Structure probing data (DMS and 2A3) for a 177-nucleotide construct. The 2A3 profile rests on 17,164 reads. DMS adducts were read by reverse transcription with MarathonRT. The DMS profile rests on 7,069 reads. The reactions ran in a buffer of 150 mM KOAc, 10 mM MgCl2 and 150 mM bicine (pH 8.5), at 24 C.
[RMDB]
RNA sequence: GGGAACGACUCGAGUAGAGUCGAAAAGAUAUGGACGAAGAACUGUACCGAACGUGUGCUUCGGAAACGAAGCAACGUAUAGACAGUACAGGGAGUCCUAAGUCAAACCGGGUCUUCGGACCCGGAACCAAGAAACAAAGUUCGCUUUGUUUCUUGGAAAAGAAACAACAACAACAAC
Reactivity to DMS in 0.01 (KOAc 150mM, MgCl2 10mM, bicine 150mM(pH8.5), 24C), signal-to-noise 6, nucleotides 027 to 126: g000a040u000a300u010g010g000a020c000g000a110a130g010a120a180c010u000g000u000a010c010c010g020a140a040c000g000u000g010u000g010c010u000u000c000g000g000a060a090a140c010g000a020a010g000c000a040a000c010g000u000a110u010a100g010a190c300a090g000u000a010c020a030g000g000g000a090g010u000c000c000u000a030a110g010u000c030a060a130a130c000c000g000g000g010u000c000u010u000c210g020g000a010c000c000c000g010g000a010a060
Reactivity to 2A3 in 0.01 (KOAc 150mM, MgCl2 10mM, bicine 150mM(pH8.5), 24C), signal-to-noise 6, nucleotides 027 to 126: g040a020u100a050u160g010g000a000c030g180a270a130g020a110a050c010u000g000u010a010c000c050g040a070a030c010g030u300g110u080g160c000u000u000c010g010g030a060a040a000c020g000a000a000g000c010a010a000c000g000u010a020u030a060g070a020c060a030g000u000a000c000a010g010g020g010a020g010u000c000c000u020a160a020g070u040c030a040a030a080c000c000g000g000g000u000c020u050u150c300g110g010a000c000c000c000g000g000a000a000